[RMDB]
RNA sequence: GGGAACGACUCGAGUAGAGUCGAAAAAUACACCAGCAGUAGGACUCAGCGACCGUCACAACAAGGUUGUGCUGGUAUCCGACGGUCGUAUAGCCCUGUCUUGCAGGUUGCCUUGCACUUACGUGCCACACCAUUUACAGAUUCGUCUGUAAAUGAAGCAGGGAUAAUACUUCGGUAUUAUCCCUGCAAAAGAAACAACAACAACAAC
Reactivity to DMS in 0.01 (KOAc 150mM, MgCl2 10mM, bicine 150mM(pH8.5), 24C), signal-to-noise 1, nucleotides 027 to 156: a000u020a060c060a140c010c020a090g040c010a040g050u010a090g020g030a070c000u000c070a140g010c010g000a030c000c000g040u020c040a120c110a170a120c120a080a060g040g010u000u000g030u010g050c000u000g030g020u010a070u020c040c050g030a060c030g020g000u000c020g030u000a100u000a020g000c000c000c010u000g020u010c040u000u000g020c060a110g040g000u020u000g030c000c160u000u000g040c000a010c010u010u000a170c190g020u000g000c000c050a080c070a180c070c010a040u010u000u000a020c000a000g000a040u000u010c290g000u000c000u000g010u010a000a010a010u010g000a030a130
Reactivity to 2A3 in 0.01 (KOAc 150mM, MgCl2 10mM, bicine 150mM(pH8.5), 24C), signal-to-noise 3, nucleotides 027 to 156: a000u120a020c070a010c020c000a000g000c010a000g020u110a000g000g020a020c020u010c060a010g010c000g000a010c000c010g000u020c020a040c040a120a210c070a230a090g080g030u050u020g050u090g040c040u040g050g020u010a030u020c030c020g000a000c010g000g000u020c010g010u040a040u070a040g000c000c010c000u020g030u030c080u050u160g000c020a020g010g000u020u060g030c020c010u040u110g020c020a040c010u140u180a060c230g000u000g020c030c010a070c010a030c050c000a000u000u000u010a010c000a000g010a010u010u120c130g120u000c070u000g000u020a010a010a010u000g030a020a010

This 207-nucleotide RNA was probed chemically with DMS and 2A3. The RNA was probed in 150 mM KOAc, 10 mM MgCl2 and 150 mM bicine (pH 8.5) at 24 C. Reactivities are given for positions 27 through 156.